[RMDB]
RNA sequence: GGGAACGACUCGAGUAGAGUCGAAAAGAAGGAUAGUUCGCUAUCCUUCAAACCCACCGAUAGGCAAAUGUGUUAGAUGCCCUCUAACACAUAAACCGGGCAAAACAGUACCGUUCGCGGUACUGAAGCAUCCAUAUGAGUUCGCUCAUAUGGAUGCAAAAGAAACAACAACAACAAC
Reactivity to 2A3 in 0.01 (KOAc 150mM, MgCl2 10mM, bicine 150mM(pH8.5), 24C), signal-to-noise 2, nucleotides 027 to 126: g000a020a000g000g000a010u000a010g010u040u070c120g000c130u000a000u010c000c010u000u000c000a000a000a000c010c000c000a010c010c040g120a110u120a180g010g050c050a020a140a040u010g000u010g000u010u010a010g000a020u300g020c000c050c000u010c000u000a000a010c000a000c000a000u010a000a000a000c020c010g010g050g000c050a050a060a070a080c020a000g000u000a000c000c020g020u040u080c270g000c010g080g000u000a000c000u000g010a030a020
Reactivity to DMS in 0.01 (KOAc 150mM, MgCl2 10mM, bicine 150mM(pH8.5), 24C), signal-to-noise 2, nucleotides 027 to 126: g020a010a030g010g010a010u000a000g010u000u020c200g020c000u000a000u000c000c000u000u000c000a030a110a120c000c000c000a120c190c150g000a180u010a040g010g050c050a060a180a010u000g040u000g000u000u000a000g000a040u020g000c300c200c090u000c000u000a000a000c000a010c000a000u000a020a130a100c040c000g000g020g000c190a060a100a090a130c040a020g000u000a020c000c000g010u020u030c100g010c000g000g000u010a010c000u000g010a040a140
Conditions: 150 mM KOAc, 10 mM MgCl2 and 150 mM bicine (pH 8.5), 24 C. An RNA of 177 nucleotides, treated with 2A3 and DMS and read out base by base. For DMS the reverse transcriptase was MarathonRT. For 2A3 the reverse transcriptase was SuperScript II with manganese.